This 177-nucleotide RNA was probed chemically with 2A3 and DMS. High DMS reactivity at an A or C suggests that its Watson-Crick edge is free. For 2A3 the reverse transcriptase was SuperScript II with manganese.

RNA sequence: GGGAACGACUCGAGUAGAGUCGAAAACAGACAUGUCAGGGAACCACGAGAUAAAUGUAAGUUAAAAUUCUGGUCCACGAUGAUCCGCAGAAAUGCGGGUAUAACUGAUACGUGCCGUACGAGUAGCCCUGAAUAAAAAAUUCGUUUUUUAUUCAGGAAAAGAAACAACAACAACAAC
Reactivity to 2A3 in 0.01 (KOAc 150mM, MgCl2 10mM, bicine 150mM(pH8.5), 24C), signal-to-noise 9, nucleotides 027 to 126: c020a010g100a030c030a050u080g010u040c020a020g010g010g060a080a080c010c010a030c110g070a070g020a050u190a110a150a030u150g100u200a050a140g070u050u150a060a070a060a100u070u010c010u030g020g000u010c020c010a030c040g020a010u150g020a000u000c000c000g000c000a000g010a020a060a020u020g000c000g000g010g000u010a020u020a020a020c010u010g020a030u050a090c040g010u030g040c020c020g050u080a060c050g040a060g090u080a030g040c000
Reactivity to DMS in 0.01 (KOAc 150mM, MgCl2 10mM, bicine 150mM(pH8.5), 24C), signal-to-noise 8, nucleotides 027 to 126: c070a120g010a070c070a060u020g010u000c020a040g010g000g010a060a070c020c020a020c150g020a060g000a100u020a040a060a050u010g000u030a100a100g010u010u000a040a080a070a110u010u000c020u000g000g010u010c020c020a060c140g000a070u030g000a010u010c000c000g000c000a010g000a110a070a110u000g020c010g000g000g000u000a010u010a090a260c060u000g000a050u010a050c060g010u010g000c040c020g010u000a050c080g010a080g010u010a110g000c170